[RMDB]
RNA sequence: GGGAACGACUCGAGUAGAGUCGAAAAACAUAUUACCAUAUGAUUCAGAUGGUGUCUUACUGGUUCGUACCAAGGGACAUAAUGGUUUCUUGUUUCCAACCAAAGAACAAGUGGCGAGCCUGAAUAAAAAACUGACUGCCGUUCGCGGCAGUCAGAAGUCAGUAACAGACUUCGGUCUGUUACUGACAAAAGAAACAACAACAACAAC
Reactivity to 2A3 in 0.01 (KOAc 150mM, MgCl2 10mM, bicine 150mM(pH8.5), 24C), signal-to-noise 2, nucleotides 027 to 156: a000c130a080u270a040u060u300a070c060c000a010u040a090u110g130a110u020u100c080a110g060a170u060g010g020u030g040u000c010u040u160a140c070u100g030g000u020u090c100g030u140a040c060c030a020a050g010g010g010a020c010a010u200a060a140u070g070g000u010u000u000c000u010u040g000u000u090u010c020c050a060a110c040c000a080a020a020g050a050a000c010a000a070g000u010g050g010c010g010a000g040c020c050u030g090a040a020u080a160a120a000a010a000a030c010u000g000a000c010u010g000c040c010g040u080u100c180g000c000g220g000c000a000g000u010c000a000g000a010a000
This 207-nucleotide RNA was probed chemically with 2A3. The 2A3 profile rests on 607 reads. The reactions ran in a buffer of 150 mM KOAc, 10 mM MgCl2 and 150 mM bicine (pH 8.5), at 24 C.